[RMDB]
RNA sequence: GGGAACGACUCGAGUAGAGUCGAAAAACGGGCAGUGGCGAUGGCAACGCGGCAGCCGCAGGGUCGACUUCUUCGCAGCCGCAACAGACGGGAGACGGGCAAAGAGGGGAACUCGUUCUGUUGGAAGGCCGUCAUGACGUUUCGACGUCAUGACGGCAAAAGAAACAACAACAACAAC
Reactivity to 2A3 in 0.01 (KOAc 150mM, MgCl2 10mM, bicine 150mM(pH8.5), 24C), signal-to-noise 1, nucleotides 027 to 126: a000c050g000g040g020c070a010g030u010g060g000c110g000a130u090g020g040c050a050a010c070g000c000g000g040c000a020g030c040c000g060c000a000g000g040g000u100c010g050a090c000u090u040c000u120u000c040g040c100a000g010c010c030g000c000a000a000c000a010g140a030c000g030g000g040a020g050a040c030g040g010g000c030a170a000a020g010a080g030g030g000g000a030a030c010u000c070g000u090u010c020u020g000u000u000g000g060a080a000g160